[RMDB]
RNA sequence: GGGAACGACUCGAGUAGAGUCGAAAAGGCAGGCGAUUGUUGUGAGAAGGAAUACCUGAUGAUAUCGCGCGUGGUGCAUGGCCGUUCUUAACACGUGGAGUGAUCUGUCUGGUCAAAUCUGAUAACGCCACAAAUAACACUUCGGUGUUAUUUGUGGAAAAGAAACAACAACAACAAC
Reactivity to DMS in 0.01 (KOAc 150mM, MgCl2 10mM, bicine 150mM(pH8.5), 24C), signal-to-noise 2, nucleotides 027 to 126: g030g010c020a040g010g020c060g000a070u000u010g000u000u010g000u010g000a100g030a100a100g000g030a130a070u000a110c050c020u010g020a110u000g000a050u010a070u010c070g010c040g010c030g020u010g000g000u000g010c070a090u000g030g000c030c040g030u000u000c050u010u000a080a120c090a050c060g020u020g010g010a130g010u010g000a050u000c060u000g000u020c100u010g000g030u000c060a050a060a110u000c070u000g010a070u020a070a090c180g000